[RMDB]
RNA sequence: GGGAACGACUCGAGUAGAGUCGAAAACAGUCAAGGUGAAGGCGGGCCAGACCAUCGCCGCAUUCUACCAGAGCACCGUCAUGAUCUUUGGCACGAUGGCUCGCUACAUACCAAGAGUUAGGGAAAAAGCUCCCACCGUAUUCGUACGGUGGGAGCUAAAAGAAACAACAACAACAAC
Reactivity to DMS in 0.01 (KOAc 150mM, MgCl2 10mM, bicine 150mM(pH8.5), 24C), signal-to-noise 1, nucleotides 027 to 126: c110a180g000u000c000a090a300g030g010u000g020a210a300g000g000c000g020g000g030c000c030a040g000a050c090c130a090u000c090g000c030c000g000c110a090u000u030c060u020a000c030c030a090g000a060g000c090a030c160c000g020u000c170a090u000g000a120u000c020u000u000u000g010g000c020a030c000g020a080u030g050g000c020u000c030g000c000u000a030c090a060u020a090c000c020a040a300g000a060g000u000u030a170g000g000g040a110a020a180a090
Chemical mapping of a 177-nucleotide RNA with DMS. DMS adducts were read by reverse transcription with MarathonRT. The reactions ran in a buffer of 150 mM KOAc, 10 mM MgCl2 and 150 mM bicine (pH 8.5), at 24 C. It was measured as part of the RMDB library OK2TRN.